[RMDB]
RNA sequence: GGGAACGACUCGAGUAGAGUCGAAAAACAAGCUGGACGUGCGUGCGAGCAGUUUUCGAAAUCGCACGUUUCACGUAAAGACGCAACUCUACUCGAGAAAGCGAGUCACGCAGACAGCGUCAAGGAAGAUACUCUGAAACUUCGGUUUCAGAGUAUCAAAAGAAACAACAACAACAAC
Reactivity to 2A3 in 0.01 (KOAc 150mM, MgCl2 10mM, bicine 150mM(pH8.5), 24C), signal-to-noise 2, nucleotides 027 to 126: a000c050a050a080g010c020u030g040g000a010c000g000u010g000c000g030u010g010c000g000a040g070c080a140g040u040u040u160u250c070g020a100a100a140u000c010g000c010a000c000g000u000u040u010c010a010c010g000u050a050a050a000g030a010c040g000c040a010a050c010u000c000u000a000c000u010c020g010a010g000a000a000a000g030c000g010a020g060u060c010a010c060g040c040a040g060a270c060a060g030c000g020u020c030a040a030g080g020a030a150
Reactivity to DMS in 0.01 (KOAc 150mM, MgCl2 10mM, bicine 150mM(pH8.5), 24C), signal-to-noise 3, nucleotides 027 to 126: a090c180a100a120g020c050u000g010g010a010c000g030u000g010c020g030u000g000c030g000a030g010c190a100g010u000u000u000u000c190g000a060a080a130u000c000g000c000a030c000g020u000u020u020c010a000c030g000u020a010a040a050g020a150c100g000c060a060a000c010u010c000u010a010c010u000c000g000a020g000a010a070a100g000c030g010a120g010u000c050a040c050g000c100a060g010a120c160a100g000c010g000u000c040a090a070g000g000a100a080